[RMDB]
RNA sequence: GGGAACGACUCGAGUAGAGUCGAAAAGAUAUGGAGUACACCGAUAAGCGUCACUCGGAAACGAGUGAACGCUUUUGACGGGGUACUCCUAAGUCGUCACGAUGUACCGCUUCGGCGGUACAUCGAACCUAAAUAUGAGGUUCGCCUCAUAUUUAGGAAAAGAAACAACAACAACAAC
Reactivity to DMS in 0.01 (KOAc 150mM, MgCl2 10mM, bicine 150mM(pH8.5), 24C), signal-to-noise 7, nucleotides 027 to 126: g000a020u000a080u010g000g000a020g020u000a010c000a010c000c000g020a080u020a020a010g020c000g010u000c000a000c000u000c000g010g000a020a020a040c000g010a020g000u000g000a030a010c000g020c000u000u000u000u010g000a300c020g000g000g000g010u000a000c000u000c000c000u000a000a070g000u000c010g010u010c170a220c030g000a010u000g010u000a000c000c000g010c000u000u010c200g030g020c000g000g000u000a000c000a000u000c010g000a040a100
Reactivity to 2A3 in 0.01 (KOAc 150mM, MgCl2 10mM, bicine 150mM(pH8.5), 24C), signal-to-noise 6, nucleotides 027 to 126: g000a000u020a000u050g000g000a010g010u010a000c020a010c010c010g060a150u120a300a030g000c010g010u010c000a000c000u000c000g000g010a020a010a000c000g000a000g000u000g000a010a010c000g000c020u010u010u020u040g010a000c000g010g000g010g000u000a000c000u000c000c000u000a000a000g000u000c020g100u100c050a010c120g000a000u000g010u000a000c000c000g030c030u070u080c240g180g000c000g000g010u000a000c000a000u000c000g000a000a000

The record gives the reactivity of an RNA of 177 nucleotides to DMS and 2A3. The 2A3 profile rests on 44,182 reads. The reactions ran in a buffer of 150 mM KOAc, 10 mM MgCl2 and 150 mM bicine (pH 8.5), at 24 C.